The data come from the RNA Mapping Database (RMDB), library TTRDEL. This 177-nucleotide RNA was probed chemically with DMS. Values are in units of 0.01, from 0 to 300, in steps of 10. The RNA was probed in 150 mM KOAc, 10 mM MgCl2 and 150 mM bicine (pH 8.5) at 24 C. For DMS, 803 sequencing reads were counted.
[RMDB]
RNA sequence: GGGAACGACUCGAGUAGAGUCGAAAAGAUAUGGAAUACCGCCCGGGAGGCUGGACGUCGGAAACGACGUCUCAGCCGAGGAUCGUAACAAGUAUUCCUAAGUCAAAGAAGUUCUUCGGAACUUCAAGUUCUGAUGCAUCUUCGGAUGCAUCAGAACAAAAGAAACAACAACAACAAC
Reactivity to DMS in 0.01 (KOAc 150mM, MgCl2 10mM, bicine 150mM(pH8.5), 24C), signal-to-noise 1, nucleotides 027 to 126: g000a020u000a050u000g000g000a030a000u000a010c030c180g010c280c180c030g010g000g010a010g040g020c000u000g000g000a000c010g020u000c010g020g000a030a010a050c000g010a020c000g010u010c020u050c000a000g020c000c000g000a050g020g000a020u020c050g010u010a150a040c180a160a210g020u000a000u000u000c000c000u010a000a110g000u000c000a070a190a220g000a020a010g020u000u000c000u010u040c170g070g000a000a010c000u020u000c010a090a170